[RMDB]
RNA sequence: GGGAACGACUCGAGUAGAGUCGAAAACUUCUCAGAAUCCAGCGUGAGGCGUAGGAGAGAGGGCCGCGGUGCUCUGGAGUAGAGGCUUCUGCUUCGAAACACCAUCGAUCGUCCCUGCUUCUUUUACCGUAAUCUGAUGGUUCGCCAUCAGAUUACGAAAAGAAACAACAACAACAAC
Reactivity to DMS in 0.01 (KOAc 150mM, MgCl2 10mM, bicine 150mM(pH8.5), 24C), signal-to-noise 1, nucleotides 027 to 126: c300u010u000c020u020c010a150g010a130a110u000c020c040a100g000c120g000u020g000a080g000g000c140g030u000a040g030g020a040g030a090g010a050g020g000g000c170c050g000c020g040g010u000g010c000u000c020u000g010g000a110g020u000a070g000a020g010g000c020u000u020c270u000g000c000u020u000c000g000a170a140a130c000a000c170c000a040u000c000g020a120u010c010g000u000c000c000c000u000g000c040u010u000c010u000u000u000u010a080c090

This 177-nucleotide RNA was probed chemically with DMS.
The reactions ran in a buffer of 150 mM KOAc, 10 mM MgCl2 and 150 mM bicine (pH 8.5), at 24 C.
The data come from the RNA Mapping Database (RMDB), library VIROID.